[RMDB]
RNA sequence: GGGAACGACUCGAGUAGAGUCGAAAAGUCUCCACAGGAGGAGCCAUGGGGCACUACGUCUUAGCUGAACGUGAGUGACACGCAGCCUGCAGACUCACUGUGGGAAGGAGACAAAACUAGAGACUCACUCUUAACUGUGCUUCGGCACAGUUAAGAGAAAAGAAACAACAACAACAAC
Reactivity to 2A3 in 0.01 (KOAc 150mM, MgCl2 10mM, bicine 150mM(pH8.5), 24C), signal-to-noise 2, nucleotides 027 to 126: g000u060c040u010c030c030a010c010a030g080g060a030g020g030a040g060c000c020a280u280g000g000g130g000c000a020c010u030a020c060g010u000c000u080u190a190g050c270u130g060a160a000c030g010u040g110a030g020u050g040a040c020a030c170g070c020a020g060c000c030u050g060c000a030g020a200c000u000c030a220c110u030g000u020g060g000g020a030a030g080g030a010g000a010c040a000a100a020a020c100u100a070g020a010g030a250c010u000c000a040
Reactivity to DMS in 0.01 (KOAc 150mM, MgCl2 10mM, bicine 150mM(pH8.5), 24C), signal-to-noise 2, nucleotides 027 to 126: g020u000c010u000c000c000a050c030a060g000g030a090g010g040a060g020c050c040a060u010g000g030g000g020c020a090c080u000a100c080g000u000c030u000u010a270g000c090u010g000a120a160c100g020u010g020a110g040u010g010a140c070a080c070g010c160a120g020c060c050u000g000c060a070g030a090c060u000c040a070c000u000g020u020g000g010g020a090a060g030g020a190g000a030c020a000a010a150a090c110u000a110g000a090g020a160c040u000c070a160
Chemical mapping of a 177-nucleotide RNA with 2A3 and DMS. For DMS, 1,100 sequencing reads were counted. Source: RMDB library OK2TRN, as collected in RNAgym. For 2A3, 1,366 sequencing reads were counted. For 2A3 the reverse transcriptase was SuperScript II with manganese. Reactivities are rounded to 0.1 and cut off at 0 and 3. Conditions: 150 mM KOAc, 10 mM MgCl2 and 150 mM bicine (pH 8.5), 24 C.